[RMDB]
RNA sequence: GGGAACGACUCGAGUAGAGUCGAAAAGGGGUCAAGGACAUGAGUGAAACACAAGCAACAGCCCUACUGAAGCCUCCACGGUAGGGACAUGCUUGUGGAGUAUGCUCAACAGCCUUGACGGAGGCACCCAAAAGUGGACUGCUUCGGCAGUCCACAAGUUCCUUAUCUGCUUCGGCAGAUAAGGAACAAAAGAAACAACAACAACAAC
Reactivity to 2A3 in 0.01 (KOAc 150mM, MgCl2 10mM, bicine 150mM(pH8.5), 24C), signal-to-noise 1, nucleotides 027 to 156: g030g040g050g020u020c000a010a040g010g010a050c090a240u260g000a000g010u030g090a070a050a010c000a000c000a000a000g000c000a060a080c000a170g070c010c020c000u000a000c000u020g030a190a050g000c000c020u000c020c000a010c020g000g000u020a010g000g000g010a010c010a070u040g000c000u000u010g010u000g000g000a000g000u060a040u300g000c000u000c020a020a020c020a070g020c000c000u000u010g000a000c000g000g010a000g010g000c010a020c000c000c040a030a090a040a070g010u000g000g000a010c000u010g040c000u110u070c300g040g000c000a000g030u040c000c000a000c030a000a010
This 207-nucleotide RNA was probed chemically with 2A3. For 2A3 the reverse transcriptase was SuperScript II with manganese. The 2A3 profile rests on 1,084 reads. The RNA was probed in 150 mM KOAc, 10 mM MgCl2 and 150 mM bicine (pH 8.5) at 24 C. Values cover nucleotides 27 to 156.